[RMDB]
The record gives the reactivity of an RNA of 170 nucleotides to 2A3 and DMS.
It was measured as part of the RMDB library 15KLIB.
DMS adducts were read by reverse transcription with MarathonRT.
The reactions ran in a buffer of 150 mM KOAc, 10 mM MgCl2 and 150 mM bicine (pH 8.5), at 24 C.
The DMS profile rests on 91,239 reads.
RNA sequence: GGGAACGACUCGAGUAGAGUCGAAAAGGGCGAAUUCCUUUGAUGUACCUACAUUCUGCGCAAACCGUUCUGCAAUGUGUAAUUGGUGCUUGAUUAGCCAAGAUUCCAUAACUCACUACCCAGCUCUGCCCUCUAAAGUUCGCUUUAGAGAAAAGAAACAACAACAACAAC
Reactivity to 2A3 in 0.01 (KOAc 150mM, MgCl2 10mM, bicine 150mM(pH8.5), 24C), signal-to-noise 9, nucleotides 027 to 129: g030g010g010c070g060a030a060u150u150c020c000u040u020u090g110a090u090g030u090a090c000c000u020a020c020a110u090u070c030u090g040c040g010c080a070a090a100c040c040g040u060u040c030u040g030c030a040a060u090g040u010g030u120a080a120u050u050g020g010u050g030c000u050u030g080a140u110u120a030g050c050c010a020a020g060a150u090u040c010c000a020u040a060a040c020u010c060a020c020u070a060c000c020c000a010g000c010u020c030u050g040c010c010
Reactivity to DMS in 0.01 (KOAc 150mM, MgCl2 10mM, bicine 150mM(pH8.5), 24C), signal-to-noise 9, nucleotides 027 to 129: g000g010g010c070g000a040a050u040u050c030c030u010u010u010g020a100u010g030u040a100c060c050u040a100c080a110u040u030c070u030g030c070g000c100a090a090a130c070c030g010u000u000c010u030g030c000a100a090u050g000u000g010u040a080a100u010u000g000g020u000g020c030u010u000g020a120u020u000a130g040c130c030a040a030g000a160u040u000c020c010a050u020a090a140c090u030c030a010c060u040a110c050c010c010a080g020c050u040c030u020g000c120c020